[RMDB]
RNA sequence: GGGAACGACUCGAGUAGAGUCGAAAAGCUUGCACAGCGUGCGGCCGUGCUUGCCAAGGCUGACCUGCAAACCGAAGUUGUCGGCGAGUUUCCUGAACUUCAGGGCGCGAUGGGGCGCAAAUAUGCAACGAUGACCCAUGUUCGCAUGGGUCAUCGUAAAAGAAACAACAACAACAAC
Reactivity to DMS in 0.01 (KOAc 150mM, MgCl2 10mM, bicine 150mM(pH8.5), 24C), signal-to-noise 1, nucleotides 027 to 126: g020c030u000u020g020c000a080c070a010g010c060g010u000g070c170g010g030c010c060g020u020g030c000u010u020g000c000c020a090a170g010g020c020u000g060a120c020c160u010g030c090a020a160a180c000c050g020a070a090g010u010u000g020u000c040g000g010c030g000a100g000u000u000u000c060c000u020g000a080a060c070u000u000c060a240g000g000g000c150g060c030g000a050u020g020g030g000g030c070g000c030a100a030a080u000a050u000g040c290a120
Annotation: The record gives the reactivity of an RNA of 177 nucleotides to DMS.